[RMDB]
RNA sequence: GGGAACGACUCGAGUAGAGUCGAAAAGUAACGGCAUCUGACAAGCGUAGACAGCAAGAAAGCAGGGUUGAAUAGUGAUUGAGCUUCGAAACGUUAACUUCAGUCGGUCGACGUCUUAACUGGUGCGCCAGGUUAUAUUGUUCGCAAUAUAACCUGGAAAAGAAACAACAACAACAAC
Reactivity to 2A3 in 0.01 (KOAc 150mM, MgCl2 10mM, bicine 150mM(pH8.5), 24C), signal-to-noise 2, nucleotides 027 to 126: g040u020a070a020c040g070g000c010a020u000c010u010g020a040c020a080a010g000c010g000u000a010g010a010c030a010g070c010a030a100g060a120a040a000g060c080a050g020g000g150u020u030g030a060a060u110a100g030u040g050a140u110u120g060a030g020c000u060u050c040g040a050a050a030c110g060u080u050a050a040c020u060u030c020a060g090u120c030g050g020u030c010g000a020c010g040u030c010u060u040a130a120c030u050g030g000u030g000c010g020
Reactivity to DMS in 0.01 (KOAc 150mM, MgCl2 10mM, bicine 150mM(pH8.5), 24C), signal-to-noise 5, nucleotides 027 to 126: g000u020a060a110c120g010g010c030a030u010c030u000g010a120c220a040a040g010c020g010u000a040g010a040c030a050g000c040a110a090g010a070a050a040g010c080a080g000g020g030u000u010g010a100a100u010a030g010u000g030a170u000u020g010a140g010c030u010u000c140g010a070a050a050c070g010u010u010a080a120c020u000u010c050a030g000u000c050g010g020u000c010g000a040c020g010u010c020u000u010a060a110c070u010g030g000u000g010c040g010
Structure probing data (2A3 and DMS) for a 177-nucleotide construct. The 2A3 profile rests on 4,404 reads.